[RMDB]
The record gives the reactivity of an RNA of 177 nucleotides to DMS and 2A3. 2A3 adducts were read by reverse transcription with SuperScript II with manganese. The RNA was probed in 150 mM KOAc, 10 mM MgCl2 and 150 mM bicine (pH 8.5) at 24 C.
RNA sequence: GGGAACGACUCGAGUAGAGUCGAAAAUACAAACGCCCUUUGCCAGUUCCGUCUGGUGAAGUGUGUGGAAGUCAAGUUCCGUCUUGUCUGAAACCUGUAACUGUGCCCAAUGGCUAGCAACCAAUUGUGUCUGCUGAAAAUUCGUUUUCAGCAGACAAAAAGAAACAACAACAACAAC
Reactivity to DMS in 0.01 (KOAc 150mM, MgCl2 10mM, bicine 150mM(pH8.5), 24C), signal-to-noise 3, nucleotides 027 to 126: u030a050c080a080a120a160c020g000c010c000c000u000u000u000g000c010c000a010g000u010u010c300c160g030u020c000u000g020g000u000g000a000a020g000u020g000u030g010u000g010g000a120a100g000u000c070a060a020g000u000u010c080c090g000u000c010u030u000g000u000c010u000g000a090a070a090c120c090u000g000u010a030a130c060u010g010u020g020c020c020c000a030a100u000g000g000c000u000a090g000c090a080a230c080c030a050a070u020u000g020
Reactivity to 2A3 in 0.01 (KOAc 150mM, MgCl2 10mM, bicine 150mM(pH8.5), 24C), signal-to-noise 4, nucleotides 027 to 126: u130a000c050a010a130a030c000g020c010c010c000u000u020u000g010c000c000a030g000u140u300c110c060g150u150c070u010g020g000u000g000a000a000g000u000g010u000g010u020g050g050a050a020g020u050c030a000a030g030u100u090c010c030g020u050c040u030u020g020u000c010u030g070a110a070a090c000c000u030g030u050a120a090c060u050g060u150g070c000c000c000a020a060u060g020g020c010u010a000g020c000a000a050c020c020a050a080u080u110g090